[RMDB]
RNA sequence: GGGAACGACUCGAGUAGAGUCGAAAAGGGAUGCUAAGUUAGUUUACCGGCUAGCUUUCAAGAUUUAAGGUAAAAACUAUUGAGAAUUUGUUUCUGGUGACUCUCUCAAUAGUAUUUCACCAGAUGCGCUCGGAGAAGCUGUUAGGUAGCUUAAAAGGAGAUACCUAAUCUUCGGAUUAGGUAUCUCAAAAGAAACAACAACAACAAC
Reactivity to 2A3 in 0.01 (KOAc 150mM, MgCl2 10mM, bicine 150mM(pH8.5), 24C), signal-to-noise 4, nucleotides 027 to 156: g040g010g010a030u040g040c040u100a060a140g030u030u040a010g020u060u110u040a030c000c000g010g000c010u020a000g000c000u050u100u150c080a070a080g010a140u090u170u300a110a060g020g000u050a040a030a000a060a050c000u000a000u010u020g000a010g030a110a110u240u250u150g010u000u050u010c010u030g010g020u020g020a040c000u000c000u000c000u000c040a010a000u010a000g010u030a040u010u110u040c000a000c000c000a000g020a050u030g050c120g000c010u050c090g110g000a110g020a070a040g010c010u020g020u070u030a040g020g050u050a040g000c020u060u130a060a070a010a050g140
Reactivity to DMS in 0.01 (KOAc 150mM, MgCl2 10mM, bicine 150mM(pH8.5), 24C), signal-to-noise 1, nucleotides 027 to 156: g020g010g030a150u000g010c020u020a070a090g030u000u000a040g000u000u000u000a150c070c030g010g020c020u000a050g010c030u000u000u010c050a050a170g000a130u000u020u000a130a190g040g040u000a010a060a060a080a050c030u000a020u000u010g000a030g010a030a190u000u010u010g010u000u000u020c010u010g000g020u000g010a070c080u000c150u010c020u020c000a010a030u000a060g030u000a080u000u010u000c010a040c030c000a080g010a070u000g010c080g060c060u020c060g030g010a260g020a080a170g040c010u010g030u010u000a080g070g010u010a070g040c050u010u000a040a080a120a150g000